RNA sequence: GGGAACGACUCGAGUAGAGUCGAAAAGAUAUGGAUCCCUGGGUAGCGAUAAGAUUUGGGUCGGAAACGACCCGGGAUCUUUUGACGCUACUCAGGGAUCCUAAGUCAAACGUCUGUUCGCAGACGAUCUAGUUGGUUUGUUCGCAAACCAACUAGAAAAAGAAACAACAACAACAAC
Reactivity to DMS in 0.01 (KOAc 150mM, MgCl2 10mM, bicine 150mM(pH8.5), 24C), signal-to-noise 2, nucleotides 027 to 126: g000a050u000a300u010g000g020a020u000c000c000c000u000g000g000g010u000a010g040c000g000a170u000a000a040g000a000u000u000u010g010g000g010u020c000g050g000a120a170a260c000g000a020c000c000c000g010g040g020a000u000c010u000u000u000u000g030a220c150g000c000u010a010c010u010c020a000g000g000g000a000u000c000c000u000a020a090g000u000c000a120a120a280c020g010u000c000u010g040u010u010c240g010c020a030g000a010c000g000a130